[RMDB]
RNA sequence: GGGAACGACUCGAGUAGAGUCGAAAAGCGUUCAGGCCCGCGUUGGCGCCGAGCGUGCCGCUCAGCGAACCGGCGAUGCCGGUGAUCGGCGCGAGCGGGUUGGUGGCGCCGCCGGACAGCGCGCCGAAGGCAUGGGUAGUUUCGACUACCCAUGCCUAAAAGAAACAACAACAACAAC
Reactivity to DMS in 0.01 (KOAc 150mM, MgCl2 10mM, bicine 150mM(pH8.5), 24C), signal-to-noise 2, nucleotides 027 to 126: g020c030g000u000u020c130a110g020g000c040c010c010g020c150g010u010u000g060g020c000g020c000c000g010a110g000c010g020u010g000c070c030g000c030u000c040a170g020c030g030a110a040c020c000g000g000c010g000a160u010g020c020c000g000g000u000g010a080u010c050g010g000c030g020c090g010a070g000c000g000g010g010u010u010g000g030u000g010g010c000g010c000c010g000c020c000g000g000a080c080a180g020c070g010c040g010c000c010g020a160
Reactivity to 2A3 in 0.01 (KOAc 150mM, MgCl2 10mM, bicine 150mM(pH8.5), 24C), signal-to-noise 1, nucleotides 027 to 126: g010c000g030u050u100c110a020g040g070c030c000c000g030c070g030u100u260g050g030c010g000c010c000g020a030g040c070g010u070g060c020c000g000c000u070c010a000g020c010g020a050a040c000c000g030g000c050g160a140u300g060c020c030g000g000u050g060a120u060c050g120g000c020g020c050g010a020g000c000g000g030g030u070u070g050g030u030g000g000c010g000c020c020g000c000c000g000g020a040c040a050g030c040g000c000g010c010c010g030a050
Record summary: The record gives the reactivity of an RNA of 177 nucleotides to DMS and 2A3. 2A3 adducts were read by reverse transcription with SuperScript II with manganese. For DMS the reverse transcriptase was MarathonRT. For 2A3, 1,763 sequencing reads were counted. Source: RMDB library OK2TRN, as collected in RNAgym.